[RMDB]
RNA sequence: GGGAACGACUCGAGUAGAGUCGAAAAGAAAUUACGUUUCCUUUACACUUCUCAAACCGGGAUCAAGAAAAGCAAAGCAUCCCUCAUAUCCACGAUGGAGGGUGUCGUGGAGUAUACUGUACCAAAAAGAGCGAACACGGCUUCGGCCGUGUUCGAAGUUAACGAGAUAGUUCGCUAUCUCGUUAACAAAAGAAACAACAACAACAAC
Reactivity to 2A3 in 0.01 (KOAc 150mM, MgCl2 10mM, bicine 150mM(pH8.5), 24C), signal-to-noise 5, nucleotides 027 to 156: g040a000a080a020u150u130a060c070g020u040u030u040c030c000u050u040u070a090c090a070c040u150u090c070u040c060a100a130a090c070c040g020g020g000a030u020c050a040a070g090a150a150a050a020g100c080a110a080a020g050c010a050u010c010c050c000u030c010a090u120a030u060c010c000a000c030g000a010u040g090g070a040g060g040g030u050g000u010c000g000u000g000g010a020g010u000a000u020a050c080u060g090u110a060c020c020a050a090a070a020a030g080a030g070c010g010a000a000c010a000c000g000g000c000u030u050c150g050g000c020c000g010u000g000u000u000c000g000a000a000
Reactivity to DMS in 0.01 (KOAc 150mM, MgCl2 10mM, bicine 150mM(pH8.5), 24C), signal-to-noise 2, nucleotides 027 to 156: g010a050a110a190u000u010a080c120g020u010u010u000c020c020u000u020u010a160c090a050c040u000u000c020u020c020a020a080a120c130c060g010g020g020a110u000c080a090a150g010a060a070a080a060g040c090a040a080a120g040c070a050u000c020c000c030u000c070a100u000a090u000c030c060a080c080g040a060u010g030g010a050g010g020g070u000g030u000c020g030u000g000g000a050g020u000a040u000a070c080u000g000u000a190c040c040a080a070a100a140a070g010a090g070c000g000a030a010c000a000c020g010g020c010u000u000c300g040g100c040c000g090u010g000u000u000c010g010a020a070
Description
The record gives the reactivity of an RNA of 207 nucleotides to 2A3 and DMS. DMS adducts were read by reverse transcription with MarathonRT. The RNA was probed in 150 mM KOAc, 10 mM MgCl2 and 150 mM bicine (pH 8.5) at 24 C. As a SHAPE reagent, 2A3 marks flexible, mostly unpaired nucleotides at the ribose 2'-OH.